[RMDB]
RNA sequence: GGGAACGACUCGAGUAGAGUCGAAAAGUAUGAGGUUCGCCUCAUACAUUGCCUUGCAACAGUUGGCCGAUGGGCUGGGCAAGGGGGUCUGGAGCAAUCCUGACCUCCCGGCUGCAAGGAUAACUACAUGGGCUACUCUGGUCGCUUCGGCGACCAGGAGCCCACACAUUUUCGAAUGUGUGGGCUCAAAAGAAACAACAACAACAAC
Reactivity to 2A3 in 0.01 (KOAc 150mM, MgCl2 10mM, bicine 150mM(pH8.5), 24C), signal-to-noise 1, nucleotides 027 to 156: g000u010a010u000g010a010g020g030u060u150c220g040c030c030u000c000a030u000a000c000a000u050u210g020c000c000u000u050g020c060a120a030c000a050g020u060u020g080g030c030c020g120a130u070g010g000g000c030u010g000g040g010c070a100a060g000g040g000g000g010u010c030u080g000g000a010g040c030a010a080u000c000c000u000g000a000c000c010u040c000c020c000g010g020c000u050g010c010a000a000g040g000a040u060a060a060c090u130a030c020a140u070g030g050g000c020u070a010c010u010c010u050g050g010u000c000g030c000u030u020c220g080g000c000g000a000c000c030a010g000
Structure probing data (2A3) for a 207-nucleotide construct. The reactions ran in a buffer of 150 mM KOAc, 10 mM MgCl2 and 150 mM bicine (pH 8.5), at 24 C. It was measured as part of the RMDB library PSEUDOB. For 2A3 the reverse transcriptase was SuperScript II with manganese.